[RMDB]
RNA sequence: GGGAACGACUCGAGUAGAGUCGAAAAAGAACUUGCGAUUGUAAAAGGCUGUUUGCGCUAAGAUAUGGAAUUAGCGCAAAUAGGUCCGAAUUCCUUGAUAACAUUUCGGACAACCGCGCUAAAACAAGUGAUUGUAAGAAUUCGUUCUUACAAUCACAAAAGAAACAACAACAACAAC
Reactivity to DMS in 0.01 (KOAc 150mM, MgCl2 10mM, bicine 150mM(pH8.5), 24C), signal-to-noise 4, nucleotides 027 to 126: a090g000a090a100c210u000u010g010c000g010a050u000u000g010u000a020a100a170a080g010g000c000u000g010u010u000u010g010c010g010c000u000a000a000g000a130u010a250u030g020g010a110a140u000u000a000g010c000g010c010a000a000a010u000a000g010g010u010c000c000g000a020a050u000u000c080c070u000u010g010a110u000a060a110c190a110u000u000u000c010g000g000a020c000a040a040c020c020g010c020g030c200u010a050a060a080a090c190a060a080
Reactivity to 2A3 in 0.01 (KOAc 150mM, MgCl2 10mM, bicine 150mM(pH8.5), 24C), signal-to-noise 4, nucleotides 027 to 126: a010g030a040a010c030u060u080g000c010g050a060u020u110g040u090a050a080a000a020g060g030c010u000g000u010u000u010g000c000g000c010u010a020a000g030a110u200a190u300g100g020a050a150u000u000a010g000c000g000c010a000a000a000u000a000g010g000u000c000c000g010a000a010u080u040c010c010u080u100g110a060u060a130a050c060a100u020u030u040c020g000g000a000c000a000a010c000c030g020c010g000c090u150a130a080a050a080c050a210a020